[RMDB]
RNA sequence: GGGAACGACUCGAGUAGAGUCGAAAAUCGUCGACGAAGGGUUCUUUCGUUCGCAAGGCUCCCUGCCGAGCUCGGGGCUGGAGCUUGGGACUGCUCAUAGAGAGCAGGUCGCCAGCCUGGGGUUGAACUGUAUGAAUGUCUUCGGACAUUCAUACAGAAAAGAAACAACAACAACAAC
Reactivity to 2A3 in 0.01 (KOAc 150mM, MgCl2 10mM, bicine 150mM(pH8.5), 24C), signal-to-noise 1, nucleotides 027 to 126: u040c010g140u060c050g010a000c020g030a020a010g100g060g090u300u290c040u060u080u040c000g070u140u100c030g010c080a070a050g000g010c010u040c030c000c030u030g080c040c000g030a010g000c000u000c010g000g000g040g010c010u000g010g000a010g100c060u070u100g160g000g000a020c010u000g000c020u010c040a090u180a090g300a000g000a000g160c010a000g010g060u040c000g000c030c020a010g000c040c000u000g010g040g030g000u040u220g090a070a060
Reactivity to DMS in 0.01 (KOAc 150mM, MgCl2 10mM, bicine 150mM(pH8.5), 24C), signal-to-noise 1, nucleotides 027 to 126: u000c140g020u030c050g000a040c020g000a050a020g000g010g020u020u030c030u000u010u000c000g010u010u000c050g010c040a130a100g010g000c050u010c020c010c020u010g010c050c010g000a060g010c010u000c000g000g000g000g000c010u010g000g000a100g020c130u000u000g000g010g000a130c000u000g000c020u010c000a180u010a110g000a200g010a000g010c000a000g000g030u000c020g000c030c000a040g000c010c000u000g040g010g010g010u000u000g010a060a160
Chemical mapping of a 177-nucleotide RNA with 2A3 and DMS. Values cover nucleotides 27 to 126. For DMS the reverse transcriptase was MarathonRT. For 2A3, 986 sequencing reads were counted.